[RMDB]
RNA sequence: GGGAACGACUCGAGUAGAGUCGAAAAUUAUGUGUCAUGCUCUAAAAAGUUUGAAAACAAGCCUAUCAGUUGAGGUUUGGUAUCAUUUAUAGGCAAGUAAACUGAAACUCUGAGGUUAAGGACGUUGCCUACUAUCAGAACUAAAAUUUGAACUCAAUAUUUAAUCGUAUUUCGAUACGAUUAAAUAAAAAGAAACAACAACAACAAC
Reactivity to 2A3 in 0.01 (KOAc 150mM, MgCl2 10mM, bicine 150mM(pH8.5), 24C), signal-to-noise 5, nucleotides 027 to 156: u110u030a080u120g090u000g040u030c020a010u050g010c030u030c040u140a090a070a010a040a060g090u100u120u110g040a060a060a020a020c020a030a000g000c000c000u080a090u120c060a080g080u090u110g100a020g010g030u030u030u080g030g010u060a020u040c010a000u000u080u080a100u050a010g020g010c020a030a020g030u110a060a140a070c030u030g050a040a020a020c030u020c050u080g040a050g040g020u070u090a040a020g040g000a020c080g030u030u050g020c030c000u000a020c000u130a150u080c020a010g020a070a050c020u110a080a030a100a180u140u170u140g020a060a030c010u020c090a110a030
Reactivity to DMS in 0.01 (KOAc 150mM, MgCl2 10mM, bicine 150mM(pH8.5), 24C), signal-to-noise 4, nucleotides 027 to 156: u010u000a070u010g020u000g020u000c030a100u000g020c040u000c030u020a070a100a100a100a070g000u000u000u000g010a090a050a100a110c000a030a090g010c000c010u010a110u010c060a260g030u000u010g010a070g010g000u000u000u000g020g000u000a100u010c050a080u010u010u010a120u010a040g000g030c000a030a120g010u000a040a070a110c020u000g000a190a040a030c020u010c090u010g010a150g040g000u010u000a110a110g010g010a060c070g000u000u000g020c000c020u000a060c060u000a080u000c080a080g010a060a130c030u000a040a030a060a180u000u000u010g020a060a210c000u000c020a020a290